[RMDB]
RNA sequence: GGGAACGACUCGAGUAGAGUCGAAAAACCUUUGUGAUUGCAAUGAUGUGUGGGAGUAUCUGCGAAGGCGAUCCCAUUGGGAUCGCUGGAGAUACUUUGAUCACAUUGAGCAAUCACUCUGGUAAAAGAACUAGCUGUCUUCGGACAGCUAGUUCAAGAUGAAUGCCGUGUUCGCACGGCAUUCAUCAAAAGAAACAACAACAACAAC
Reactivity to 2A3 in 0.01 (KOAc 150mM, MgCl2 10mM, bicine 150mM(pH8.5), 24C), signal-to-noise 2, nucleotides 027 to 156: a030c000c000u020u060u000g000u010g010a000u000u030g010c030a120a230u280g000a010u030g030u010g010u020g030g190g010a020g000u010a000u000c030u120g300c090g030a020a010g000g000c000g000a000u030c010c000c040a040u120u300g000g010g030a010u020c000g010c000u000g000g000a020g000a000u000a000c010u000u020u050g070a130u140c000a000c020a000u000u010g010a010g000c000a000a000u000c000a020c000u010c010u000g040g010u050a060a060a020a060g000a000a010c000u000a000g000c000u000g010u000c000u050u080c210g060g000a000c000a010g010c000u000a000g000u000u000c000a000a010
The data come from the RNA Mapping Database (RMDB), library RNAMAK. This 207-nucleotide RNA was probed chemically with 2A3. Values cover nucleotides 27 to 156.